Source information: The record gives the reactivity of an RNA of 177 nucleotides to 2A3 and DMS. The reactions ran in a buffer of 150 mM KOAc, 10 mM MgCl2 and 150 mM bicine (pH 8.5), at 24 C. For 2A3, 3,986 sequencing reads were counted.
[RMDB]
RNA sequence: GGGAACGACUCGAGUAGAGUCGAAAAGUCGCGCAGAUGAAGCCAGAUUCAGGUGCCUACCCGCAAUUUGCCAACGUUAGCUUUGUGGCGAAAGACGGCAAACUGAACGACCUUAAAAUCAAAGGCGGAUACGCGUGAAAUUCGUUUCACGCGUAUCAAAAGAAACAACAACAACAAC
Reactivity to 2A3 in 0.01 (KOAc 150mM, MgCl2 10mM, bicine 150mM(pH8.5), 24C), signal-to-noise 4, nucleotides 027 to 126: g040u020c000g000c020g000c090a020g030a150u080g040a080a020g060c040c050a020g030a120u050u060c020a020g070g000u020g030c020c010u030a050c020c010c000g000c030a030a070u050u020u050g020c030c000a090a050c190g050u100u040a030g010c010u080u130u210g150u240g080g000c010g010a030a050a010g100a010c010g000g000c000a040a040a050c030u030g010a050a010c030g120a220c000c000u080u080a120a180a000a050u130c070a060a030a040g020g000c010g000
Reactivity to DMS in 0.01 (KOAc 150mM, MgCl2 10mM, bicine 150mM(pH8.5), 24C), signal-to-noise 5, nucleotides 027 to 126: g010u010c060g030c090g030c050a080g020a110u020g020a110a090g010c050c060a080g000a150u000u000c050a020g010g000u010g010c020c040u000a170c070c000c040g040c050a060a100u000u000u000g000c010c020a060a300c100g020u000u000a150g000c050u000u010u010g020u010g000g010c030g000a060a100a130g020a080c300g000g000c030a020a030a050c060u000g000a060a110c070g000a080c040c030u010u010a070a070a100a100u010c110a030a100a060g010g010c040g020